[RMDB]
RNA sequence: GGGAACGACUCGAGUAGAGUCGAAAACUGCGGUCACGGCUGCCUUGUGGGUCUGGGGGCCGCUGCACAUCCAGCACAGGCAGGAUGGCCAAGGGGGGGACAUCUCUCCAGCCAUCCUGCUGCAGCCCCCUGCACCUAGAUUCGUCUAGGUGCAGGGAAAAGAAACAACAACAACAAC
Reactivity to 2A3 in 0.01 (KOAc 150mM, MgCl2 10mM, bicine 150mM(pH8.5), 24C), signal-to-noise 1, nucleotides 027 to 126: c010u060g000c010g010g010u010c010a020c110g020g100c000u080g130c030c000u140u230g050u180g040g040g060u240c040u050g000g020g100g000g030c000c020g010c010u070g000c040a030c000a090u050c020c000a050g060c010a040c020a060g010g060c030a020g020g000a000u000g000g030c050c060a220a220g000g000g000g000g010g000g040a050c020a270u150c040u050c030u000c000c020a030g010c000c000a000u030c020c000u000g030c000u000g000c000a010g030c000c000
Reactivity to DMS in 0.01 (KOAc 150mM, MgCl2 10mM, bicine 150mM(pH8.5), 24C), signal-to-noise 2, nucleotides 027 to 126: c090u000g000c060g040g010u000c020a060c190g030g000c010u000g020c020c040u000u000g050u000g010g010g010u010c050u000g000g000g020g000g020c030c020g010c020u000g000c100a080c170a110u000c000c010a010g010c010a130c030a050g030g000c000a020g000g000a010u000g000g000c010c050a100a080g000g010g000g010g010g000g000a180c300a100u010c000u000c000u000c000c000a170g000c000c000a000u010c000c000u000g000c020u000g000c030a120g010c010c070

Description
Structure probing data (2A3 and DMS) for a 177-nucleotide construct. The 2A3 profile rests on 1,266 reads. For DMS, 1,687 sequencing reads were counted. The RNA was probed in 150 mM KOAc, 10 mM MgCl2 and 150 mM bicine (pH 8.5) at 24 C. It was measured as part of the RMDB library OK2TRN. For 2A3 the reverse transcriptase was SuperScript II with manganese. Reactivities are given for positions 27 through 126.